Chemical mapping of a 177-nucleotide RNA with 2A3. Source: RMDB library OK1LIB, as collected in RNAgym. The reactions ran in a buffer of 150 mM KOAc, 10 mM MgCl2 and 150 mM bicine (pH 8.5), at 24 C. For 2A3, 369 sequencing reads were counted.
RNA sequence: GGGAACGACUCGAGUAGAGUCGAAAAUCAUACGGAAACAACGAAGGUUCACCUGUGCAGCAUCAUGUGUUUUGUUCCUCUGUUCUCAGCUCUGCAGUUUUGCUGACCUUCUUUUCAAUGGAACAAACGGUGCAGUCGGGUUCGCCCGACUGCACCGAAAAGAAACAACAACAACAAC
Reactivity to 2A3 in 0.01 (KOAc 150mM, MgCl2 10mM, bicine 150mM(pH8.5), 24C), signal-to-noise 1, nucleotides 027 to 126: u130c030a010u050a300c080g050g030a050a090a030c070a090a010c020g150a050a000g120g000u140u020c200a170c020c000u010g000u050g000c000a000g000c060a000u030c000a010u110g110u000g070u160u000u190u060g000u150u030c000c000u010c080u000g030u120u000c080u000c050a050g000c050u000c020u150g070c070a070g020u000u050u270u090g000c000u010g000a000c000c000u050u060c000u100u060u000u000c090a260a220u120g070g050a050a000c000a060a010a010